Conditions: 150 mM KOAc, 10 mM MgCl2 and 150 mM bicine (pH 8.5), 24 C.
Structure probing data (2A3 and DMS) for a 177-nucleotide construct.
The data come from the RNA Mapping Database (RMDB), libraries RFM100 and RFMREP.

RNA sequence: GGGAACGACUCGAGUAGAGUCGAAAAGUCGCUGAUGUGCAGAGUAGGUAGGAGACGUUACACAGGUACGUGCGCUAGCACGCCACCGAGUCACACAUGAAACACUACCCGUCAGUGACUGUGACCCACCGGGGUCAACUUUCGAGUUGACCCCGGUAAAAGAAACAACAACAACAAC
Reactivity to 2A3 in 0.01 (KOAc 150mM, MgCl2 10mM, bicine 150mM(pH8.5), 24C), signal-to-noise 2, nucleotides 027 to 126: g000u000c000g000c000u000g000a000u000g010u030g000c020a020g090a110g170u010a000g050g020u010a020g020g060a300g010a060c000g010u030u090a010c020a000c000a010g000g010u010a000c000g000u010g000c000g000c020u010a010g000c000a000c000g010c010c000a000c000c010g000a000g000u000c000a010c000a000c000a010u000g000a010a000a000c010a000c010u000a000c000c000c000g000u000c000a010g000u000g000a000c000u000g010u010g070a130c000c000c000
Reactivity to DMS in 0.01 (KOAc 150mM, MgCl2 10mM, bicine 150mM(pH8.5), 24C), signal-to-noise 2, nucleotides 027 to 126: g010u000c000g000c000u010g020a010u000g000u000g000c050a020g000a190g020u000a020g000g010u000a000g020g000a080g010a030c020g100u030u010a020c060a020c010a020g000g010u000a010c030g020u000g030c000g000c000u080a050g000c020a000c000g000c000c020a000c000c030g000a010g000u000c000a300c300a020c300a040u000g030a020a000a100c000a110c000u000a010c000c000c000g020u000c000a010g030u010g000a010c000u000g010u010g000a140c010c000c020